[RMDB]
This 207-nucleotide RNA was probed chemically with 2A3. The reactions ran in a buffer of 150 mM KOAc, 10 mM MgCl2 and 150 mM bicine (pH 8.5), at 24 C.

RNA sequence: GGGAACGACUCGAGUAGAGUCGAAAACUUAUUAGUAACUAAUCCAAAGCAAGUAUAGGAGAGCAGGUUUUUAACUAUUUUUAGGCAGAUAAAAAAUAGUAUUUGACAGUCUAACACUAACUGAACACCACGCUCUCUUACUUCGGUAAGAGAGCAAGCCUAACUAAGUCUUCGGACUUAGUUAGGCAAAAGAAACAACAACAACAAC
Reactivity to 2A3 in 0.01 (KOAc 150mM, MgCl2 10mM, bicine 150mM(pH8.5), 24C), signal-to-noise 1, nucleotides 027 to 156: c000u070u070a030u150u170a230g080u100a090a140c040u030a080a060u030c010c040a060a010a030g060c040a110a060g040u110a080u120a190g050g000a030g000a000g000c050a040g020g040u010u040u010u070u070a020a010c000u010a020u030u020u000u030u000a040g050g000c010a010g030a170u210a020a060a000a010a000a000u030a020g040u030a130u070u050u070g090a020c010a040g010u000c020u080a050a030c040a030c170u060a150a000c000u070g070a090a020c030a040c120c020a080c030g020c000u000c010u000c000u000u000a000c010u020u030c010g020g000u000a000a010g000a000g000a000g030c000a000a000